[RMDB]
RNA sequence: GGGAACGACUCGAGUAGAGUCGAAAAUUAAAAUUGGUAGAUAAAAUUGUAUGUAUUUAUCAUGUACAACAUACUGUUUUGAAGUAUAUAUACAUUGUGGAAUGAGGAACUCCAGCUAAUUAACAUAUUCAUUACCUCACAUAGUUACCAUUUUUGAAUAUUACCGUGCUUUCGAGCACGGUAAUAUAAAAGAAACAACAACAACAAC
Reactivity to DMS in 0.01 (KOAc 150mM, MgCl2 10mM, bicine 150mM(pH8.5), 24C), signal-to-noise 1, nucleotides 027 to 156: u000u000a070a000a180a190u000u000g010g030u000a060g020a270u000a110a060a080a160u000u000g000u010a040u000g010u000a060u000u000u020a150u000c010a030u010g040u010a040c010a030a040c020a300u000a050c030u000g000u040u000u000u000g000a060a110g000u000a060u030a050u000a100u000a100c000a010u000u000g010u010g070g060a030a070u000g010a060g030g000a140a020c060u000c010c000a010g030c090u040a040a070u000u000a070a080c040a030u010a070u000u000c100a080u010u000a170c070c000u000c000a030c070a110u000a100g020u010u000a030c010c010a110u000u000u000u000u010g000a230
Reactivity to 2A3 in 0.01 (KOAc 150mM, MgCl2 10mM, bicine 150mM(pH8.5), 24C), signal-to-noise 1, nucleotides 027 to 156: u010u030a000a000a030a040u090u030g010g000u040a110g010a160u110a170a140a010a020u110u020g010u010a040u060g000u000a090u050u100u070a100u240c000a010u100g030u070a030c040a040a000c010a040u270a040c080u040g010u120u040u050u090g100a060a000g040u000a000u000a000u000a000u000a100c000a000u040u040g030u030g080g020a050a050u040g000a000g000g030a070a000c030u000c010c000a000g030c070u040a150a000u300u090a040a060c040a020u130a130u080u040c010a010u080u030a130c000c070u080c000a030c000a070u150a040g050u080u070a010c000c000a000u000u030u000u000u080g030a000
This 207-nucleotide RNA was probed chemically with DMS and 2A3. Conditions: 150 mM KOAc, 10 mM MgCl2 and 150 mM bicine (pH 8.5), 24 C. DMS adducts were read by reverse transcription with MarathonRT. For 2A3, 622 sequencing reads were counted. The data come from the RNA Mapping Database (RMDB), library OK3TST.